[RMDB]
RNA sequence: GGGAACGACUCGAGUAGAGUCGAAAAUCGAGCUUCGGCUCGAACAAAUUCCUAAGUCUAAGUAGUAUGACAUGGAUCGGGUGUCGGAAACGACAUCUCUAGCGUGUCCAACAGCAUACGAAACUUAGAUAUGGACGGGUGGAGCGUUCGCGCUCAAUAUGAUGCACUCUUUCGAGAGUGCAUCAUAAAAAGAAACAACAACAACAAC
Reactivity to 2A3 in 0.01 (KOAc 150mM, MgCl2 10mM, bicine 150mM(pH8.5), 24C), signal-to-noise 2, nucleotides 027 to 156: u020c000g000a000g020c030u110u100c190g120g000c000u000c000g000a000a000c010a000a110a030u100u000c010c010u040a100a090g000u000c000u000a000a000g010u130a000g000u000a020u000g070a170c020a100u080g010g010a010u020c060g010g000g000u000g000u000c000g030g030a070a130a040c000g010a000c000a000u000c040u000c010u050a120g060c040g110u220g050u090c000c010a060a050c020a100g040c000a000u000a000c010g030a120a020a000c000u000u010a000g000a010u040a080u070g010g000a020c110g000g000g070u140g040g000a020g010c010g040u100u080c180g030c010g040c140u060c000a010a010
Reactivity to DMS in 0.01 (KOAc 150mM, MgCl2 10mM, bicine 150mM(pH8.5), 24C), signal-to-noise 2, nucleotides 027 to 156: u000c010g000a070g010c020u010u000c280g010g020c000u000c000g000a010a160c070a080a080a160u000u010c000c020u000a070a290g030u000c030u010a010a030g050u000a300g000u010a030u010g000a040c070a300u000g010g010a020u010c030g010g050g010u000g000u000c010g040g000a170a160a100c000g010a010c000a000u000c020u000c030u000a050g020c230g040u020g000u030c010c020a070a070c060a160g040c020a020u000a010c010g020a120a110a070c030u000u000a010g010a020u010a160u000g020g010a040c000g000g000g040u010g030g000a040g000c000g000u000u020c090g030c050g040c000u000c010a040a190
The data come from the RNA Mapping Database (RMDB), library RNAMAK. Chemical mapping of a 207-nucleotide RNA with 2A3 and DMS. For DMS the reverse transcriptase was MarathonRT. For 2A3, 1,481 sequencing reads were counted. Values are in units of 0.01, from 0 to 300, in steps of 10.